Chemical mapping of a 177-nucleotide RNA with 2A3 and DMS. The data come from the RNA Mapping Database (RMDB), library OK1LIB. High DMS reactivity at an A or C suggests that its Watson-Crick edge is free. 2A3 adducts were read by reverse transcription with SuperScript II with manganese. DMS adducts were read by reverse transcription with MarathonRT. Conditions: 150 mM KOAc, 10 mM MgCl2 and 150 mM bicine (pH 8.5), 24 C.

[RMDB]
RNA sequence: GGGAACGACUCGAGUAGAGUCGAAAAUAUUGAAAACGGAUUAAAAGGUGAAGAAAAAGUAUUGAUUGAACAAAUGGCGCAGCAUUGCGAAGCUUUUAAAGCUAAUUUUAAAGGUGCAGCUCAAGGAUACGGAAUGAUAGUUCGCUAUCAUUCCGUAAAAAGAAACAACAACAACAAC
Reactivity to 2A3 in 0.01 (KOAc 150mM, MgCl2 10mM, bicine 150mM(pH8.5), 24C), signal-to-noise 2, nucleotides 027 to 126: u190a010u000u080g010a030a030a000a000c030g040g010a020u020u070a030a120a070a080g140g000u100g060a020a010g040a060a100a000a050a010g000u030a060u060u020g110a150u020u100g040a030a010c060a020a040a040u070g020g030c040g010c030a030g040c020a090u050u070g050c030g030a120a000g000c000u090u070u040u150a050a040a010g020c020u030a050a240u030u030u000u120a040a030a000g030g000u070g050c100a000g000c000u020c120a060a060g050g020a060
Reactivity to DMS in 0.01 (KOAc 150mM, MgCl2 10mM, bicine 150mM(pH8.5), 24C), signal-to-noise 4, nucleotides 027 to 126: u030a070u010u000g010a070a070a060a100c050g000g000a060u010u010a070a070a100a070g000g000u000g000a050a060g010a080a030a060a080a090g000u010a060u020u020g010a080u000u010g010a070a040c110a060a070a070u010g000g020c050g000c040a070g000c100a020u000u000g000c030g010a140a210g020c010u020u010u030u020a030a020a020g030c130u040a050a040u020u000u000u000a020a050a070g000g010u000g000c040a120g000c040u010c060a060a070g000g000a150